[RMDB]
RNA sequence: GGGAACGACUCGAGUAGAGUCGAAAACACCCGCAAUUCGUUGCGGGUGAGAGCACCAGUCCUGCGGGAGUUAAGGCCAUACGGACAGCCGGGUGCAAAGCCAUAGCAGGUCCUUCGGGACCUGCAAGAUACUCUCCCGUUUCGACGGGAGAGUAUCAAAAGAAACAACAACAACAAC
Reactivity to DMS in 0.01 (KOAc 150mM, MgCl2 10mM, bicine 150mM(pH8.5), 24C), signal-to-noise 2, nucleotides 027 to 126: c000a000c000c000c000g000c000a000a030u020u010c140g000u000u000g000c010g010g000g040u000g010a010g030a190g000c010a010c020c010a070g010u000c000c000u000g020c160g010g000g000a130g010u000u050a160a130g020g010c000c000a070u000a280c200g000g020a000c040a130g010c100c060g000g010g000u000g020c010a030a060a090g010c060c090a100u010a100g040c000a030g000g010u010c000c000u000u020c180g010g000g000a020c000c000u000g000c000a010a010
Reactivity to 2A3 in 0.01 (KOAc 150mM, MgCl2 10mM, bicine 150mM(pH8.5), 24C), signal-to-noise 2, nucleotides 027 to 126: c010a000c000c010c000g020c000a030a050u080u090c160g060u060u000g000c000g020g000g000u000g010a000g020a000g000c010a010c020c010a020g070u030c000c030u040g030c160g030g040g060a140g060u170u220a140a080g090g090c010c010a050u080a180c020g040g020a000c000a010g130c080c060g130g010g010u000g000c000a060a030a000g050c010c000a070u110a050g000c000a000g060g020u000c010c010u080u130c160g080g000g000a020c000c000u000g020c000a000a000
Structure probing data (DMS and 2A3) for a 177-nucleotide construct. The reactions ran in a buffer of 150 mM KOAc, 10 mM MgCl2 and 150 mM bicine (pH 8.5), at 24 C. The data come from the RNA Mapping Database (RMDB), library M2PK50.